[RMDB]
The record gives the reactivity of an RNA of 177 nucleotides to 2A3 and DMS. For DMS the reverse transcriptase was MarathonRT. The 2A3 profile rests on 1,681 reads. The RNA was probed in 150 mM KOAc, 10 mM MgCl2 and 150 mM bicine (pH 8.5) at 24 C. Values cover nucleotides 27 to 126.

RNA sequence: GGGAACGACUCGAGUAGAGUCGAAAAUAUUUGGGUGCGCGCCGUAUUCAUAAGCGCACUUAUGCCUACGUGUAAACUCGCGCCUCUGUUUGUGCUCCUUGACUGAGGUGACCAUAAUAUAAAGCGAAAUGAUGCCGAUAUUCGUAUCGGCAUCAUUAAAAGAAACAACAACAACAAC
Reactivity to 2A3 in 0.01 (KOAc 150mM, MgCl2 10mM, bicine 150mM(pH8.5), 24C), signal-to-noise 3, nucleotides 027 to 126: u260a160u140u160u120g040g000g000u040g010c000g000c000g000c070c050g060u110a140u070u140c130a060u150a250a020g010c010g000c040a020c000u010u040a100u130g010c000c000u090a050c000g080u090g000u090a090a100a030c030u020c030g040c020g070c010c000u060c000u060g070u130u130u030g120u070g000c020u020c030c000u040u040g060a070c010u060g000a010g000g000u000g030a030c000c000a010u080a160a160u150a030u060a120a100a000g070c040g090a070
Reactivity to DMS in 0.01 (KOAc 150mM, MgCl2 10mM, bicine 150mM(pH8.5), 24C), signal-to-noise 2, nucleotides 027 to 126: u030a130u060u010u010g000g010g030u010g000c000g020c010g010c200c150g000u010a120u000u010c180a040u040a070a170g000c110g010c090a030c010u020u000a030u010g000c040c020u020a070c020g010u020g040u010a010a050a150c170u020c040g010c010g000c000c000u000c020u000g000u000u040u000g010u000g040c060u000c010c020u000u000g010a030c070u030g000a050g000g000u000g000a110c050c110a010u040a030a050u010a110u020a000a120a040g000c080g000a070